[RMDB]
RNA sequence: GGGAACGACUCGAGUAGAGUCGAAAAACAUUCACUGUUGUAAUGCGCCCUAACUACACAAUUAAGGGUUCCUUUCUGUGUGGUUCUUGUGGUAGUGUUGGUUACACCAAGGAGGGUAGUGUGAUCAGACUUACAUUGUGUUCGCACAAUGUAAGUCAAAAGAAACAACAACAACAAC
Reactivity to DMS in 0.01 (KOAc 150mM, MgCl2 10mM, bicine 150mM(pH8.5), 24C), signal-to-noise 3, nucleotides 027 to 126: a060c070a090u000u010c050a080c140u000g010u000u000g010u010a070a050u000g010c090g000c010c000c020u010a080a030c020u010a020c030a020c020a040a080u010u000a040a030g010g010g010u010u000c010c010u010u000u000c070u010g010u000g000u000g000g000u000u000c160u020u000g020u010g000g020u000a020g030u000g010u000u010g010g000u000u000a030c030a060c040c050a060a080g010g020a070g000g000g020u000a060g020u000g000u000g000a060u010c050a130
Reactivity to 2A3 in 0.01 (KOAc 150mM, MgCl2 10mM, bicine 150mM(pH8.5), 24C), signal-to-noise 3, nucleotides 027 to 126: a000c030a050u110u110c030a040c110u080g050u140u050g040u060a060a020u080g020c010g000c010c000c000u000a010a000c010u010a000c010a000c010a040a270u080u060a040a050g120g080g110u210u300c010c000u010u030u000c010u020g020u000g000u010g000g010u000u020c030u090u060g040u140g050g000u030a090g010u060g100u080u110g060g040u030u020a010c020a010c030c030a040a030g050g030a030g000g010g000u050a110g010u050g010u020g030a020u060c040a030